Structure probing data (2A3) for a 207-nucleotide construct. For 2A3, 870 sequencing reads were counted. The RNA was probed in 150 mM KOAc, 10 mM MgCl2 and 150 mM bicine (pH 8.5) at 24 C. Reactivities are given for positions 27 through 156.

RNA sequence: GGGAACGACUCGAGUAGAGUCGAAAAAGCGUAGCGGUACGCCGCUACGCAAGGCGCAUUUGAACUGUAUUGUACGCCUUGCAUAAAGCAAAAGUACUAAAAAAACGUGCCGUUACGACGGCACGACAAAACAUCCAUUGGUUCGCCAAUGGAUGAAUCACGUAUCCCUCUUCGGAGGGAUACGUGAAAAAGAAACAACAACAACAAC
Reactivity to 2A3 in 0.01 (KOAc 150mM, MgCl2 10mM, bicine 150mM(pH8.5), 24C), signal-to-noise 2, nucleotides 027 to 156: a000g000c010g000u000a000g010c000g090g020u070a030c190g060c070c020g000c000u000a000c010g000c000a000a000g000g000c020g000c050a060u160u120u210g160a200a130c120u130g040u240a180u180u190g040u040a050c030g000c000c030u030u010g000c030a060u120a220a040a040g030c020a000a050a030a000g090u090a100c170u260a000a020a030a000a000a040a020c020g000u000g020c000c000g000u010u000a050c150g050a000c000g040g000c000a000c000g000a000c000a000a040a000a060c000a000u000c000c000a000u000u000g020g050u030u070c190g000c080c000a000a000u000g000g000a000u000g000a000a000